Chemical mapping of a 207-nucleotide RNA with 2A3.
RNA sequence: GGGAACGACUCGAGUAGAGUCGAAAACAUUAAGAUAUUGAUUCUUAAAUUUCCACUACUGAAAAUUAUCCAGUGGUGUAAUUGUUAGGGCCAGAGUCUACUAGAAUGUUUUUUAGCUAAAAAGCCAGAUCAGUCUCUAAGCUUGUCUUCUAGUAUAGUACCAUAUCAUCUUCGGAUGAUAUGGUACAAAAGAAACAACAACAACAAC
Reactivity to 2A3 in 0.01 (KOAc 150mM, MgCl2 10mM, bicine 150mM(pH8.5), 24C), signal-to-noise 1, nucleotides 027 to 156: c020a000u070u120a080a000g000a010u100a010u300u300g040a070u090u040c000u000u000a020a190a190u000u000u050c050c000a000c000u000a000c000u000g130a130a020a260a300u220u170a270u050c100c000a000g000u000g010g010u010g040u060a030a050u080u100g040u180u170a040g000g060g000c010c010a010g050a020g080u020c040u010a010c000u000a110g010a130a000u040g070u060u000u000u090u100u090a000g000c000u040a090a050a140a140a000g050c060c010a000g060a180u070c020a050g060u000c020u000c010u230a110a040g010c050u020u010g000u000c000u070u000c000u040a010g100u050a110u060a280